Description
An RNA of 177 nucleotides, treated with 2A3 and DMS and read out base by base. The reactions ran in a buffer of 150 mM KOAc, 10 mM MgCl2 and 150 mM bicine (pH 8.5), at 24 C. For 2A3 the reverse transcriptase was SuperScript II with manganese. It was measured as part of the RMDB library 15KREP.

[RMDB]
RNA sequence: GGGAACGACUCGAGUAGAGUCGAAAAUUCUAGUCUUAGAACCUUUGUUGUAGAUAAGUCUUUGUCAAUUGAGGAGUUUGCUGACGUAGUAAAGGAACAAGUCUCAGACUUGCUUGUUAAAUUACUGGAUUAUAUUGAUGUUCGCAUCAAUAUAAUCAAAAGAAACAACAACAACAAC
Reactivity to 2A3 in 0.01 (KOAc 150mM, MgCl2 10mM, bicine 150mM(pH8.5), 24C), signal-to-noise 2, nucleotides 027 to 126: u040u010c000u000a020g040u000c040u050u040a020g000a080a050c000c000u040u030u100g050u040u010g020u070a020g010a090u060a070a050g050u000c000u070u070u060g080u070c030a020a110u070u080g020a040g010g020a040g070u020u080u080g030c030u050g020a020c030g000u010a030g010u020a050a100a040g070g020a040a010c010a080a010g010u010c020u000c060a020g010a060c010u040u030g050c010u020u030g030u030u060a090a150a160u110u090a050c030u040g030
Reactivity to DMS in 0.01 (KOAc 150mM, MgCl2 10mM, bicine 150mM(pH8.5), 24C), signal-to-noise 5, nucleotides 027 to 126: u010u010c010u000a040g010u010c100u010u000a060g010a070a120c030c010u000u000u000g010u000u000g000u000a080g020a080u010a060a090g010u010c050u000u000u000g010u010c050a040a090u000u000g010a060g010g020a160g010u000u000u000g020c060u000g000a090c110g000u010a040g010u000a030a050a090g000g000a060a040c020a030a050g010u000c060u000c160a120g000a040c060u000u000g000c050u010u000g010u000u000a030a060a070u000u000a050c040u000g010